Annotation: The record gives the reactivity of an RNA of 207 nucleotides to 2A3 and DMS. The DMS profile rests on 5,814 reads. Conditions: 150 mM KOAc, 10 mM MgCl2 and 150 mM bicine (pH 8.5), 24 C. For 2A3, 1,072 sequencing reads were counted. It was measured as part of the RMDB library OK3TST.
[RMDB]
RNA sequence: GGGAACGACUCGAGUAGAGUCGAAAAUUAUGGGUACUACGAUGCUACUGCUCAGACAGGCUCCACUGAAUCACAUGAUUAUGUUUGUGAGUAUCUUUUGAUGGAACCCGGUACUUAUACAGCAUCAACUGUUGGCAAGUUUUUUGUGUACCCCACCUAGUACAUACGUCUUCGGACGUAUGUACUAAAAAGAAACAACAACAACAAC
Reactivity to 2A3 in 0.01 (KOAc 150mM, MgCl2 10mM, bicine 150mM(pH8.5), 24C), signal-to-noise 2, nucleotides 027 to 156: u200u120a060u220g020g000g000u000a010c000u000a030c100g030a000u030g000c020u050a110c000u040g020c040u020c070a030g000a090c000a020g000g000c010u060c010c010a040c030u020g050a070a000u030c010a020c010a130u100g060a130u220u250a140u300g240u160u150u010g020u010g000a010g020u040a130u110c030u070u170u110u090g130a150u050g000g060a030a040c010c050c000g040g000u030a000c030u020u060a050u010a170c010a010g000c000a070u030c060a060a080c030u020g040u110u070g080g010c040a070a000g070u000u030u000u010u200u270g030u020g010u010a000c000c000c000c020a020c010c020
Reactivity to DMS in 0.01 (KOAc 150mM, MgCl2 10mM, bicine 150mM(pH8.5), 24C), signal-to-noise 3, nucleotides 027 to 156: u020u000a130u010g010g010g040u000a030c020u020a070c030g020a070u010g030c000u000a160c100u000g010c020u010c100a090g010a110c030a060g000g020c010u000c000c010a040c030u000g020a060a070u010c030a090c070a080u000g010a170u010u010a110u000g000u000u000u000g010u000g020a110g020u010a090u020c050u000u000u000u000g010a090u010g000g020a010a050c030c030c020g020g020u000a070c070u010u000a130u010a080c080a090g000c000a030u000c050a100a140c080u000g000u010u000g000g000c080a060a130g010u000u000u000u000u000u000g050u010g010u000a080c040c040c020c080a070c300c100